[RMDB]
RNA sequence: GGGAACGACUCGAGUAGAGUCGAAAACGAACAAGUGAUUGUUUCGGAAUUGGAUAUGGUGGUCUUAUUGUCACCAAUAGGCAUCUGUUUAAACGAAACAAUGGAACGUUGACAAUAAGGUCUCGUCCUAGCAGGGAUGGUUCGCCAUCCCUGCUAGAAAAGAAACAACAACAACAAC
Reactivity to DMS in 0.01 (KOAc 150mM, MgCl2 10mM, bicine 150mM(pH8.5), 24C), signal-to-noise 1, nucleotides 027 to 126: c090g060a070a060c130a140a130g000u030g040a080u000u000g000u000u000u010c000g020g010a190a210u000u000g000g000a110u000a010u030g060g090u020g010g020u010c000u000u030a000u000u010g000u000c010a010c130c000a190a100u000a060g000g000c000a000u020c150u020g040u000u000u100a070a140a190c130g000a000a000a020c000a030a000u000g030g000a140a150c090g010u000u000g000a000c010a010a030u000a040a070g000g040u000c000u000c010g000u000c060
Reactivity to 2A3 in 0.01 (KOAc 150mM, MgCl2 10mM, bicine 150mM(pH8.5), 24C), signal-to-noise 2, nucleotides 027 to 126: c050g010a010a020c060a150a090g090u100g120a150u030u000g050u000u030u000c000g060g120a050a130u170u250g080g010a010u020a060u110g220g040u010g020g000u000c000u040u000a000u030u000g040u030c000a000c000c030a100a010u070a140g080g000c020a000u000c010u090g130u020u050u060a170a090a000c120g070a050a000a000c010a000a000u000g000g050a110a000c080g000u000u010g020a000c000a000a000u000a100a000g050g000u050c030u000c030g020u010c000
Chemical mapping of a 177-nucleotide RNA with DMS and 2A3. It was measured as part of the RMDB library OK1LIB. Conditions: 150 mM KOAc, 10 mM MgCl2 and 150 mM bicine (pH 8.5), 24 C.